[RMDB]
RNA sequence: GGGAACGACUCGAGUAGAGUCGAAAAUCCGUGAAACGCGAAAAUCGGACGGUGGCUGCAAGUCGCAUCGCAAAACCGCGGCAAGUGGAGUUAGCGAGAGGAUGCUGGGUUUUGGCUUCCUUAAGCAUUGGGAUCCGCCCCUUCGGGGGCGGAUCAAGAAUCAUCAAGUGUUCGCACUUGAUGAUUCAAAAGAAACAACAACAACAAC
Reactivity to DMS in 0.01 (KOAc 150mM, MgCl2 10mM, bicine 150mM(pH8.5), 24C), signal-to-noise 1, nucleotides 027 to 156: u000c000c000g000u000g040a100a070a060c040g000c010g020a070a080a200a190u010c050g010g000a100c010g030g050u000g010g040c040u000g010c040a060a200g010u010c080g030c010a120u000c040g000c020a040a060a110a120c110c110g000c040g010g000c060a060a180g030u000g040g020a140g020u000u000a100g030c020g020a300g000a060g010g010a030u000g020c000u000g030g040g020u000u000u000u000g000g000c050u010u000c020c020u010u000a030a300g030c070a140u000u010g020g010g000a070u000c000c000g010c000c000c000c000u010u000c300g030g000g050g000g060c000g010g010a000u010c000a010a070
Reactivity to 2A3 in 0.01 (KOAc 150mM, MgCl2 10mM, bicine 150mM(pH8.5), 24C), signal-to-noise 1, nucleotides 027 to 156: u010c010c010g010u010g040a150a100a000c060g000c000g020a020a050a030a130u050c020g070g030a040c030g040g060u010g020g020c050u150g010c120a160a050g000u110c050g000c090a050u060c010g000c070a220a070a000a000c050c010g000c000g050g000c060a080a030g020u090g050g050a060g050u140u150a020g050c010g000a020g000a020g070g000a010u030g030c010u060g020g140g040u030u070u120u100g040g000c010u020u000c010c020u020u040a040a000g000c010a040u030u160g070g020g000a000u020c000c010g070c010c010c000c000u020u110c240g100g000g000g000g040c000g010g010a010u000c000a000a010
An RNA of 207 nucleotides, treated with DMS and 2A3 and read out base by base. For DMS the reverse transcriptase was MarathonRT. The DMS profile rests on 1,896 reads. Conditions: 150 mM KOAc, 10 mM MgCl2 and 150 mM bicine (pH 8.5), 24 C.